[RMDB]
RNA sequence: GGGAACGACUCGAGUAGAGUCGAAAAGAUAUGGAGCGUUAUGAUUUCGAAGAACUAGCUCGGAAACGAGCUAGGGAGAAGCAUACGGCGCUCCUAAGUCAAAGCCCUUUCGCUUCGGCGAAAGGGCCAUCGACCUUUUGUUCGCAAAAGGUCGAUGAAAAGAAACAACAACAACAAC
Reactivity to DMS in 0.01 (KOAc 150mM, MgCl2 10mM, bicine 150mM(pH8.5), 24C), signal-to-noise 2, nucleotides 027 to 126: g010a040u000a120u010g000g000a010g010c000g030u000u010a000u000g020a300u020u010u000c020g010a110a180g000a190a220c010u000a000g000c010u010c000g000g000a010a040a090c000g000a020g000c000u000a000g010g000g010a040g010a030a070g010c020a060u010a040c300g000g000c030g010c000u000c010c000u020a000a110g000u000c020a110a140a180g000c000c010c000u000u000u000c020g010c000u000u020c220g040g000c010g020a000a000a010g000g000g010c040
Reactivity to 2A3 in 0.01 (KOAc 150mM, MgCl2 10mM, bicine 150mM(pH8.5), 24C), signal-to-noise 1, nucleotides 027 to 126: g030a000u010a010u130g000g010a010g020c040g000u090u100a030u090g150a240u070u210u140c170g240a300a020g010a020a000c000u000a000g000c000u030c040g000g030a000a030a010c000g020a000g010c020u000a000g000g000g000a030g020a060a000g070c000a030u080a130c150g090g000c000g020c020u000c000c000u000a030a010g000u000c060a000a070a110g000c000c000c000u000u030u020c010g030c010u060u080c300g150g030c020g020a000a000a000g000g030g090c010
Conditions: 150 mM KOAc, 10 mM MgCl2 and 150 mM bicine (pH 8.5), 24 C. Structure probing data (DMS and 2A3) for a 177-nucleotide construct. For 2A3 the reverse transcriptase was SuperScript II with manganese. It was measured as part of the RMDB library TTRDES. The DMS profile rests on 1,481 reads.